This 177-nucleotide RNA was probed chemically with DMS and 2A3. It was measured as part of the RMDB library RFMREP.
RNA sequence: GGGAACGACUCGAGUAGAGUCGAAAAUCGAGCGCGCCCCAAGAUUUCCUCACCCGCGUCGGAGACGCGGGGAAGAGCGCAAGAGCAUACGGAAGUCUGACAGUGUCCGGCCUAACGACGGACGCUGGUAAUGGAUCUUGUUCGCAAGAUCCAUUACAAAAGAAACAACAACAACAAC
Reactivity to DMS in 0.01 (KOAc 150mM, MgCl2 10mM, bicine 150mM(pH8.5), 24C), signal-to-noise 3, nucleotides 027 to 126: u000c010g000a060g020c050g030c300g020c190c030c020c200a100a070g010a020u000u000u000c000c010u000c110a170c000c000c010g020c010g020u010c020g040g030a300g010a040c000g070c020g010g000g000g000a050a060g000a050g020c050g000c100a110a140g010a230g000c020a100u020a070c130g010g000a030a020g020u000c050u000g020a300c000a000g010u000g000u000c000c010g000g000c090c040u010a100a140c210g010a060c010g000g000a020c000g040c010u000g010
Reactivity to 2A3 in 0.01 (KOAc 150mM, MgCl2 10mM, bicine 150mM(pH8.5), 24C), signal-to-noise 2, nucleotides 027 to 126: u030c010g000a000g010c030g000c000g000c030c000c000c000a070a000g010a020u010u010u020c000c010u030c040a040c000c020c000g020c010g020u040c150g290g170a300g000a130c000g000c000g010g000g000g000a070a000g000a010g000c030g000c040a070a080g090a020g040c040a030u110a170c080g000g010a030a000g030u000c020u030g040a030c010a000g000u020g000u010c010c020g000g080c010c050u180a220a050c080g060a020c000g010g000a000c010g010c010u020g030

Reactivities are given for positions 27 through 126. The RNA was probed in 150 mM KOAc, 10 mM MgCl2 and 150 mM bicine (pH 8.5) at 24 C. For 2A3 the reverse transcriptase was SuperScript II with manganese.